An RNA of 207 nucleotides, treated with DMS and 2A3 and read out base by base.
The RNA was probed in 150 mM KOAc, 10 mM MgCl2 and 150 mM bicine (pH 8.5) at 24 C.
For 2A3, 944 sequencing reads were counted.
RNA sequence: GGGAACGACUCGAGUAGAGUCGAAAACUCGCGCGAACAUCGAGGCGUGGAGCGCGACAUGAAUCAGCCUCCAUUAGAUUAAUGGUCGACAGAUCAGCGGCGAUCAGCGACCGAAUUAGAAGCCGCCACCGGAAGAGGAGACGCUCGACGGACGUCAAUGAGCUAUUUACUUCGGUAAAUAGCUCAUAAAAGAAACAACAACAACAAC
Reactivity to DMS in 0.01 (KOAc 150mM, MgCl2 10mM, bicine 150mM(pH8.5), 24C), signal-to-noise 1, nucleotides 027 to 156: c010u000c030g020c040g000c030g040a080a200c070a140u010c080g000a080g030g070c050g000u000g010g000a280g000c000g000c000g020a110c110a050u160g000a170a120u000c080a070g010c000c020u000c000c100a130u000u000a030g030a220u020u000a110a030u000g000g000u000c030g020a110c050a200g000a080u010c020a090g040c030g030g000c010g060a050u000c030a160g000c010g010a070c000c000g040a050a090u000u000a140g010a050a150g030c010c020g080c000c010a210c050c000g000g000a070a110g000a080g000g020a150g000a060c020g010c020u000c000g000a080c000g030g000a060c040g000u000c020a170
Reactivity to 2A3 in 0.01 (KOAc 150mM, MgCl2 10mM, bicine 150mM(pH8.5), 24C), signal-to-noise 2, nucleotides 027 to 156: c000u000c000g000c000g000c020g000a180a020c000a040u030c010g000a000g010g000c020g020u010g020g010a010g000c020g020c000g040a050c060a090u230g170a140a170u120c060a010g010c000c000u020c010c000a200u160u180a070g080a120u070u150a140a070u160g000g000u020c000g020a100c080a220g030a010u030c000a050g040c000g000g000c040g020a000u030c010a010g040c000g000a010c010c000g020a000a050u190u080a110g030a090a010g020c040c040g000c000c040a060c020c000g020g000a080a050g010a040g020g030a110g000a060c060g000c030u030c040g050a030c030g000g020a090c000g040u010c040a030
For DMS, 1,798 sequencing reads were counted. For DMS the reverse transcriptase was MarathonRT.